Structure probing data (DMS and 2A3) for a 207-nucleotide construct. It was measured as part of the RMDB library M2RFPK. Reactivities are rounded to 0.1 and cut off at 0 and 3.

[RMDB]
RNA sequence: GGGAACGACUCGAGUAGAGUCGAAAAGUUAGGUGAGGCUCCUAUGCAAACACAGGCCACUGCCCAAAAAUGUCCAAAGACGCCAAUGGGUAGAACAGGGAUUGUCGGAUCAAGGCUUUCCAUAAUGAAAACAAAGUAUGCUUCGGCAUACUUUGAACUUAAAAUACCACUUCGGUGGUAUUUUAAGAAAAGAAACAACAACAACAAC
Reactivity to DMS in 0.01 (KOAc 150mM, MgCl2 10mM, bicine 150mM(pH8.5), 24C), signal-to-noise 2, nucleotides 027 to 156: g020u000u000a010g050g010u010g010a150g010g000c060u000c010c000u020a060u010g010c050a180a100a130c040a050c070a060g000g020c020c020a100c020u000g020c000c000c000a000a050a090a120a120u000g010u020c020c050a100a150a210g000a080c070g000c030c050a040a290u000g010g010g010u000a010g010a040a090c060a080g010g010g000a070u010u000g010u000c010g010g010a090u010c060a090a110g000g000c040u000u000u010c000c020a130u000a070a100u020g010a080a070a090a140c020a020a020a010g000u000a000u000g010c000u000u000c300g060g020c000a000u010a000c000u000u010u000g010a060a110
Reactivity to 2A3 in 0.01 (KOAc 150mM, MgCl2 10mM, bicine 150mM(pH8.5), 24C), signal-to-noise 2, nucleotides 027 to 156: g050u040u020a050g020g050u020g070a050g000g060c050u080c070c020u090a070u160g070c050a040a210a030c030a010c010a100g060g000c020c020a030c030u020g000c000c000c000a010a000a040a000a000u010g010u000c010c020a170a100a130g030a000c020g000c020c020a020a030u010g000g000g020u030a010g010a070a010c070a070g040g000g010a030u020u050g050u040c070g020g010a050u090c060a090a050g020g000c030u000u040u030c010c020a050u130a140a100u160g090a080a130a000a010c000a000a000a020g000u000a000u000g000c000u040u110c190g090g000c000a000u000a000c000u000u010u000g000a000a000